An RNA of 207 nucleotides, treated with 2A3 and DMS and read out base by base. Values cover nucleotides 27 to 156. Conditions: 150 mM KOAc, 10 mM MgCl2 and 150 mM bicine (pH 8.5), 24 C. It was measured as part of the RMDB library M2RFPK. The DMS profile rests on 1,767 reads. As a SHAPE reagent, 2A3 marks flexible, mostly unpaired nucleotides at the ribose 2'-OH. 2A3 adducts were read by reverse transcription with SuperScript II with manganese.
[RMDB]
RNA sequence: GGGAACGACUCGAGUAGAGUCGAAAACCUGUUAUCUGACCAAUAACAGAAUGCACCACAGCGUAAAAUCAUCUGAUUGGGUGAGUUGGUCGCACCGCCAUUUGACGAACGAACGCCAAGCGUAAGCACUACGAGUAUGUGUUCGCACAUACUCGAACUUCCCUAGACAGUUCGCUGUCUAGGGAAGAAAAGAAACAACAACAACAAC
Reactivity to 2A3 in 0.01 (KOAc 150mM, MgCl2 10mM, bicine 150mM(pH8.5), 24C), signal-to-noise 4, nucleotides 027 to 156: c010c000u000g000u010u010a000u000c000u000g000a000c010c010a010a010u000a010a010c020a000g060a090a130u150g020c020a020c050c000a020c060a040g010c030g060u060a040a070a090a090u050c010a020u000c040u100g090a210u090u220g120g000g000u010g000a050g010u000u040g000g000u010c030g060c020a000c000c020g070c030c010a080u070u060u170g040a030c020g030a140a020c030g020a040a010c000g040c040c060a090a040g000c010g050u080a050a040g040c030a070c080u140a060c080g000a000g010u000a000u000g020u000g010u000u080c170g040c030a000c000a000u000a000c000u000c000g000a000a010
Reactivity to DMS in 0.01 (KOAc 150mM, MgCl2 10mM, bicine 150mM(pH8.5), 24C), signal-to-noise 1, nucleotides 027 to 156: c080c010u000g010u000u010a010u000c030u010g000a000c050c020a300a030u000a050a010c000a040g000a080a100u000g030c030a130c050c000a060c080a060g000c120g000u020a060a160a050a100u010c050a050u000c110u000g020a170u000u020g030g000g050u000g000a300g000u010u000g000g010u000c020g000c000a050c020c000g020c050c080a150u020u000u030g010a070c010g000a120a140c090g000a110a080c080g000c020c020a020a110g000c070g010u000a040a070g000c020a080c030u000a090c000g000a000g010u000a010u000g020u000g020u020u010c300g000c010a020c030a000u000a000c000u000c010g020a020a140